Description:
Structure probing data (2A3 and DMS) for a 177-nucleotide construct. For DMS, 1,808 sequencing reads were counted. For DMS the reverse transcriptase was MarathonRT. The RNA was probed in 150 mM KOAc, 10 mM MgCl2 and 150 mM bicine (pH 8.5) at 24 C. 2A3 adducts were read by reverse transcription with SuperScript II with manganese.
RNA sequence: GGGAACGACUCGAGUAGAGUCGAAAAUCAUUGAACAAAACACCAAUCGACAAAGCGCUGGCCGAGAUUGUGCUUCGCGAUCUGAUCGCCGACGCCAACACCAUGCAAAUCAGCGCGGCGACGAUCACAUGAUUCGCUCUUUCGAGAGCGAAUCAUGAAAAGAAACAACAACAACAAC
Reactivity to 2A3 in 0.01 (KOAc 150mM, MgCl2 10mM, bicine 150mM(pH8.5), 24C), signal-to-noise 5, nucleotides 027 to 126: u120c070a090u030u190g100a100a030c050a040a090a010a010c050a040c030c050a040a030u050c020g070a070c050a030a060a010g030c040g000c020u010g030g000c050c020g090a090g050a230u050u080g020u110g050c030u030u020c020g000c030g060a060u000c080u210g110a210u020c010g020c050c050g080a130c010g000c000c020a030a020c020a030c050c030a070u280g060c070a070a030a070u080c000a010g000c000g000c000g020g020c000g000a010c010g000a000u040c010a010
Reactivity to DMS in 0.01 (KOAc 150mM, MgCl2 10mM, bicine 150mM(pH8.5), 24C), signal-to-noise 2, nucleotides 027 to 126: u020c130a150u010u030g030a090a060c180a070a050a120a000c230a050c090c020a120a090u000c000g000a020c020a000a300a080g000c080g000c000u000g000g000c050c020g000a140g040a230u000u000g040u080g000c050u000u000c040g030c060g000a010u000c110u030g030a160u000c000g000c070c060g060a050c060g090c040c010a040a040c180a080c170c090a080u030g000c040a030a080a040u000c110a040g010c040g030c030g000g000c220g000a000c010g080a000u000c020a180
Reactivities are given for positions 27 through 126.